[RMDB]
RNA sequence: GGGAACGACUCGAGUAGAGUCGAAAAGGGGUCUCUAUAAUUGAAACACGAGCGUCUCUAGCGUGUUCAUCGAUCGUUCUGAAGCCUCCACGGAACGGGAGAAUCGGGCGCUCGUAAGAGACGGAGGCACCCAAAGGCUCGUUCUUCGGAACGAGCCCGUCUGUAGCAACUUCGGUUGCUACAGACGAAAAGAAACAACAACAACAAC
Reactivity to 2A3 in 0.01 (KOAc 150mM, MgCl2 10mM, bicine 150mM(pH8.5), 24C), signal-to-noise 2, nucleotides 027 to 156: g000g040g030g020u070c040u000c010u020a170u200a300a300u300u280g090a190a230a040c130a010c060g010a010g010c030g040u030c090u040c080u270a070g080c070g110u300g090u140u070c030a080u300c020g050a030u000c000g010u050u010c000u010g000a050a010g000c010c000u000c000c010a010c000g000g000a020a000c020g010g010g010a030g000a030a060u160c110g050g020g020c030g000c000u000c000g000u000a060a000g010a000g000a010c000g010g000a000g000g000c000a010c000c000c000a050a100a000g000g010c000u010c000g020u000u030c000u040u090c300g110g010a000a000c010g000a000g040c010c000
Record summary: Source: RMDB library RNAMAK, as collected in RNAgym. Structure probing data (2A3) for a 207-nucleotide construct. 2A3 adducts were read by reverse transcription with SuperScript II with manganese.